[RMDB]
RNA sequence: GGGAACGACUCGAGUAGAGUCGAAAAGGAGAUCGAAGAAGACCGACGUCAGCACGGUCUGGAUGUAGGUCCGCAUGCAUCCCAGUUGACGAAACUUAACGAUUUCCAAAGCGGACAAGAAGUCAAAGCCCAUUAAUCGGUUCGCCGAUUAAUGGGCAAAAGAAACAACAACAACAAC
Reactivity to DMS in 0.01 (KOAc 150mM, MgCl2 10mM, bicine 150mM(pH8.5), 24C), signal-to-noise 1, nucleotides 027 to 126: g000g010a000g000a000u000c060g000a270a190g000a060a120g000a070c080c000g000a110c000g040u000c000a070g040c240a130c190g000g000u000c060u000g040g040a000u000g000u000a000g000g000u000c000c000g010c000a020u000g100c060a000u020c000c040c300a050g040u000u000g000a010c170g000a140a000a120c020u000u000a280a150c000g000a070u000u000u040c000c000a030a020a150g060c010g040g030a000c000a050a040g070a160a110g000u050c140a050a000a060
Reactivity to 2A3 in 0.01 (KOAc 150mM, MgCl2 10mM, bicine 150mM(pH8.5), 24C), signal-to-noise 2, nucleotides 027 to 126: g000g000a000g000a010u010c050g000a050a060g040a100a000g010a090c000c150g000a020c050g200u150c170a020g010c220a030c060g010g130u010c020u000g000g000a010u010g040u010a000g020g010u000c010c000g000c050a000u000g000c000a000u000c040c000c000a000g000u000u050g000a000c100g110a050a130a000c000u000u010a070a000c000g020a020u000u000u030c000c010a050a000a000g020c000g000g000a000c000a020a050g140a110a000g150u190c000a120a100a000